Structure probing data (2A3 and DMS) for a 177-nucleotide construct.
The reactions ran in a buffer of 150 mM KOAc, 10 mM MgCl2 and 150 mM bicine (pH 8.5), at 24 C.
For DMS the reverse transcriptase was MarathonRT.
High DMS reactivity at an A or C suggests that its Watson-Crick edge is free.
For 2A3 the reverse transcriptase was SuperScript II with manganese.
RNA sequence: GGGAACGACUCGAGUAGAGUCGAAAAUCAUGUGCCUUCGGGCACAUGAAAACAUCCAGGAUCGCCAAAGGAUGGAAAUUAUGGCGAACCAAUAAGGAGAAAAAAGACCCGAGUUCGCUCGGGUCAAGAUAGUUUAUGUGUUCGCACAUAAACUAUCAAAAGAAACAACAACAACAAC
Reactivity to 2A3 in 0.01 (KOAc 150mM, MgCl2 10mM, bicine 150mM(pH8.5), 24C), signal-to-noise 5, nucleotides 027 to 126: u010c000a000u000g000u000g000c000c020u030u070c240g020g000g000c010a000c000a000u000g000a000a000a000a000c010a040u010c000c000a010g000g020a030u000c000g010c020c000a050a050a060g190g040a110u200g060g110a120a130a050u190u100a090u090g000g000c010g010a010a020c000c010a010a040u220a120a070g080g010a050g090a040a170a020a040a010a000g000a000c010c010c000g010a000g000u040u070c100g010c060u000c000g000g000g000u000c000a000a000
Reactivity to DMS in 0.01 (KOAc 150mM, MgCl2 10mM, bicine 150mM(pH8.5), 24C), signal-to-noise 4, nucleotides 027 to 126: u000c000a000u000g010u000g020c000c010u000u000c230g040g010g030c000a010c010a000u000g000a010a050a080a090c140a090u000c000c000a130g010g010a060u000c010g030c000c000a010a110a130g000g000a070u000g030g020a080a110a080u000u000a120u000g010g000c000g000a010a050c000c010a110a090u010a100a120g000g010a130g020a000a050a070a070a140a120g000a020c000c000c000g000a020g010u000u000c150g010c000u000c010g010g020g020u000c000a000a020